RNA sequence: GGGAACGACUCGAGUAGAGUCGAAAACUAUUUAUAGACAGAACAGUGGAAAACGUAUAUCGCUAUAAACCUUAGACGCCGAGUCUUCCAGUCGUACCAUUCCACAUAGGCGAGGCAUAAGCGAAAGCAUAGCUGAGCCUUUCGAGGCUCAGCUAUGAAAAGAAACAACAACAACAAC
Reactivity to 2A3 in 0.01 (KOAc 150mM, MgCl2 10mM, bicine 150mM(pH8.5), 24C), signal-to-noise 5, nucleotides 027 to 126: c000u020a040u020u060u030a140u060a040g110a060c070a050g080a190a020c020a030g020u060g080g090a090a160a060a010c010g040u040a050u020a030u190c030g000c010u000a010u040a120a070a060c010c030u040u090a050g020a070c060g000c040c030g020a000g000u000c000u070u000c020c010a010g050u030c010g000u030a090c040c000a050u060u060c020c000a030c010a070u090a040g030g020c030g010a020g000g020c020a030u050a130a030g000c000g030a100a040a000g070
Reactivity to DMS in 0.01 (KOAc 150mM, MgCl2 10mM, bicine 150mM(pH8.5), 24C), signal-to-noise 5, nucleotides 027 to 126: c030u010a070u010u020u010a070u000a050g000a080c070a170g020a070a070c130a090g030u020g000g010a090a050a090a100c120g000u010a070u020a080u010c040g000c020u000a040u000a030a080a090c100c050u020u000a100g010a070c080g020c030c020g000a140g000u010c010u010u010c050c020a040g000u020c040g010u020a060c040c010a150u010u010c040c040a030c060a080u010a090g010g000c050g000a090g000g020c070a040u010a060a060g010c050g010a100a060a090g000